Chemical mapping of a 177-nucleotide RNA with DMS.
The data come from the RNA Mapping Database (RMDB), library OK2TST.
Reactivities are given for positions 27 through 126.
RNA sequence: GGGAACGACUCGAGUAGAGUCGAAAAUGAGCGUAGUCUAGCCAGCCUACCUCACGGCGUUGUCCCUGCGAGUUCAUAUAAGUAGAUCUUACGAGAUUGAUACUUUAUUGCGCUGAGGCCGAGACUGCAGCCCUCGUCUAUUCGUAGACGAGGGCUGAAAAGAAACAACAACAACAAC
Reactivity to DMS in 0.01 (KOAc 150mM, MgCl2 10mM, bicine 150mM(pH8.5), 24C), signal-to-noise 1, nucleotides 027 to 126: u010g000a010g010c160g020u010a030g000u010c030u000a120g000c160c140a150g000c130c010u000a020c050c030u020c030a050c070g020g000c040g000u010u020g000u000c020c030c020u000g000c110g000a070g020u000u020c030a030u000a090u000a010a040g010u020a080g010a040u000c010u000u000a160c080g020a060g000a020u000u020g010a280u000a010c010u000u000u000a080u010u000g000c060g010c010u000g000a060g030g000c090c040g000a090g030a040c070u000g020